[RMDB]
RNA sequence: GGGAACGACUCGAGUAGAGUCGAAAAUCACUGGACUUCGGUCCAGUGAAAAAGAAAGACGCACGGCGAACGUCAAACGCUGACGUACGAAAGUACGAAAAAAAAGUACGCCCUUCGGGGCGUACAACACUUUAACCUAGUUCGCUAGGUUAAAGUGAAAAGAAACAACAACAACAAC
Reactivity to 2A3 in 0.01 (KOAc 150mM, MgCl2 10mM, bicine 150mM(pH8.5), 24C), signal-to-noise 3, nucleotides 027 to 126: u020c000a000c000u000g000g000a000c000u030u050c250g080g010u000c000c000a000g010u000g000a000a000a000a000a000g070a010a050a010g070a020c020g030c050a030c050g060g020c020g030a140a050c020g070u080c080a110a080a040c070g000c050u050g060a050c010g000u010a000c010g040a080a030a020g010u010a010c020g090a110a000a010a010a000a000a000a020g000u000a000c010g000c000c000c000u010u050c140g050g000g000g010c000g000u000a000c000a000a000
Reactivity to DMS in 0.01 (KOAc 150mM, MgCl2 10mM, bicine 150mM(pH8.5), 24C), signal-to-noise 4, nucleotides 027 to 126: u000c000a000c000u000g010g000a030c000u000u010c200g010g010u000c000c000a010g030u000g010a010a010a060a080a140g000a080a100a080g000a120c040g040c060a060c070g000g020c030g000a070a050c020g010u010c120a050a110a090c100g020c070u000g020a240c000g010u000a010c010g000a110a080a110g020u010a010c020g010a000a000a000a050a040a030a120a120g020u000a010c000g000c000c000c000u000u010c220g040g020g000g000c000g030u000a000c000a040a090
The data come from the RNA Mapping Database (RMDB), library M2PK50. An RNA of 177 nucleotides, treated with 2A3 and DMS and read out base by base.